[RMDB]
RNA sequence: GGGAACGACUCGAGUAGAGUCGAAAAAGGUGGUGCUGACUGUCCUUAGCCGCGAAGGCGAUGGAACUGCAGAAAAAGACCUGCUGGACGUGGUGGAAAAAGCUCUGAACAGUGAGAACGUCCGCCCGGUGGCUGACCGUCUUACGGUUCGCAGCGCAUCGAGAUGACUAUUCGUAGUCAUCUCGAUAAAAGAAACAACAACAACAAC
Reactivity to DMS in 0.01 (KOAc 150mM, MgCl2 10mM, bicine 150mM(pH8.5), 24C), signal-to-noise 1, nucleotides 027 to 156: a060g050g060u020g090g000u000g050c010u010g000a070c060u000g020u000c040c000u000u000a290g010c040c000g020c080g020a090a290g020g000c020g020a130u020g000g010a010a090c030u000g000c030a130g040a040a030a070a120a230g000a020c070c010u020g020c040u000g020g000a170c060g080u000g000g020u030g030g020a100a050a090a100a190g010c000u000c000u010g010a080a070c040a080g010u020g000a080g000a090a100c030g010u000c020c080g000c000c000c030g060g050u000g010g010c020u010g020a040c010c050g020u000c070u000u000a050c000g000g020u000u000c000g070c050a020g000c030g000c110
Reactivity to 2A3 in 0.01 (KOAc 150mM, MgCl2 10mM, bicine 150mM(pH8.5), 24C), signal-to-noise 2, nucleotides 027 to 156: a000g040g020u050g000g050u110g030c030u020g100a160c020u040g000u050c000c000u030u120a010g000c020c000g020c100g110a180a070g000g000c010g010a040u140g010g040a040a050c020u050g010c040a010g080a060a170a000a010a000g080a050c000c000u030g020c020u020g000g030a030c020g040u070g000g030u060g000g000a000a030a000a150a000g020c030u020c060u010g030a030a010c010a040g040u010g040a020g000a050a010c020g020u000c000c020g000c000c010c020g130g040u220g030g000c010u000g010a010c050c070g010u040c030u050u050a020c020g000g020u000u010c040g000c030a010g010c010g010c010
Source information: Structure probing data (DMS and 2A3) for a 207-nucleotide construct. It was measured as part of the RMDB library OK3TST. For DMS, 2,441 sequencing reads were counted. Conditions: 150 mM KOAc, 10 mM MgCl2 and 150 mM bicine (pH 8.5), 24 C. The 2A3 profile rests on 1,577 reads.